Structure probing data (2A3 and DMS) for a 177-nucleotide construct. It was measured as part of the RMDB library TTRDES. The 2A3 profile rests on 2,326 reads. High 2A3 reactivity points to a flexible backbone, as in loops and unpaired stretches.
RNA sequence: GGGAACGACUCGAGUAGAGUCGAAAAGAUAUGGAGCCUAUCUCUAGCGUGCCCUAUGAAGUACACAUAAGAUACUCGGAAACGAGUAUCAAUAAAGUGUAUGGAGGGUCGGGUAGGCUCCUAAGUCCAUAUUCGUGCAGUUCGCUGCACGAAUAUGAAAAGAAACAACAACAACAAC
Reactivity to 2A3 in 0.01 (KOAc 150mM, MgCl2 10mM, bicine 150mM(pH8.5), 24C), signal-to-noise 2, nucleotides 027 to 126: g060a020u060a040u070g000g030a030g020c000c000u050a060u080c060u040c100u210a020g120c110g300u300g020c070c000c000u230a300u110g040a030a000g020u000a000c020a010c020a040u130a060a070g000a010u010a000c020u010c000g000g030a020a070a000c000g000a000g000u010a000u000c000a000a000u040a010a040a010g000u030g020u000a010u020g010g030a000g000g000g000u010c030g030g000g000u000a000g000g060c000u040c000c010u000a010a000g000u040c000
Reactivity to DMS in 0.01 (KOAc 150mM, MgCl2 10mM, bicine 150mM(pH8.5), 24C), signal-to-noise 3, nucleotides 027 to 126: g010a020u000a170u020g000g000a000g020c000c000u000a000u010c000u000c210u030a200g090c300g010u020g030c010c000c000u000a280u010g010a160a160g000u000a000c010a020c000a050u000a160a280g000a020u000a000c000u000c000g010g010a050a070a100c020g000a020g000u000a000u000c000a020a050u010a060a120a160g010u000g010u000a000u000g000g000a020g010g020g030u000c050g000g000g000u010a010g010g010c000u000c000c000u000a010a060g010u000c020